[RMDB]
RNA sequence: GGGAACGACUCGAGUAGAGUCGAAAAAUCAGCCAUCGUUCUGUAAACGGGGUUGGAUCCGACUCUCAUAGGCUCUCCAACCCAACUCCUACUCAAUACGUCCUCGUCGUACAGAACGGUAACAUGUAAAACGAAGGCUGCUUCGGCAGCCUUCGAAGACAGGAAGUGAGUUCGCUCACUUCCUGUCAAAAGAAACAACAACAACAAC
Reactivity to 2A3 in 0.01 (KOAc 150mM, MgCl2 10mM, bicine 150mM(pH8.5), 24C), signal-to-noise 1, nucleotides 027 to 156: a050u040c030a030g070c020c000a000u010c010g010u000u000c000u010g000u020a080a000a040c000g010g000g030g000u000u000g020g010a070u270c010c000g100a090c020u060c010u010c100a130u140a270g000g000c000u000c000u000c030c000a000a000c000c000c000a000a000c010u010c070c000u130a070c030u110c160a000a270u110a280c040g090u110c010c040u050c090g040u040c010g000u030a000c000a000g000a020a000c000g000g000u040a010a040c050a060u120g120u270a020a080a000a030c020g000a000a010g010g000c000u010g000c000u010u020c100g090g040c000a000g030c010c000u000u000c000g000a000a000
Annotation:
An RNA of 207 nucleotides, treated with 2A3 and read out base by base. Source: RMDB library M2RFPK, as collected in RNAgym. Reactivities are rounded to 0.1 and cut off at 0 and 3.